[RMDB]
RNA sequence: GGGAACGACUCGAGUAGAGUCGAAAAGGGGUCUAGGCAAGUCGUCCAUCUUUGGGAGCUUGGAUUUAUAUACUGAAGCCUCCACGGUAUAUUGUCAGCUCCGAUGGACGUCACCCUAGACGGAGGCACCCAAAAACGGACGUUUCGACGUCCGUAAGUUGUUGUUGGAGUUCGCUCCAACAACAACAAAAGAAACAACAACAACAAC
Reactivity to 2A3 in 0.01 (KOAc 150mM, MgCl2 10mM, bicine 150mM(pH8.5), 24C), signal-to-noise 2, nucleotides 027 to 156: g120g020g040g010u010c010u020a000g030g000c060a230a300g020u050c010g010u000c010c000a030u030c070u210u300u240g120g030g020a020g020c080u200u240g140g000a020u110u300u000a000u000a000u000a000c000u000g030a100a020g010c000c000u010c010c010a010c000g010g000u000a000u000a000u000u010g040u020c040a030g000c010u010c000c020g000a000u000g000g000a000c000g010u000c000a010c000c000c010u000a000g000a000c020g010g000a010g030g000c010a050c020c000c030a070a060a000a040a000c010g000g010a000c000g010u050u100u140c220g110a040c000g000u000c000c000g000u000a000a020
Structure probing data (2A3) for a 207-nucleotide construct. Values cover nucleotides 27 to 156. The RNA was probed in 150 mM KOAc, 10 mM MgCl2 and 150 mM bicine (pH 8.5) at 24 C.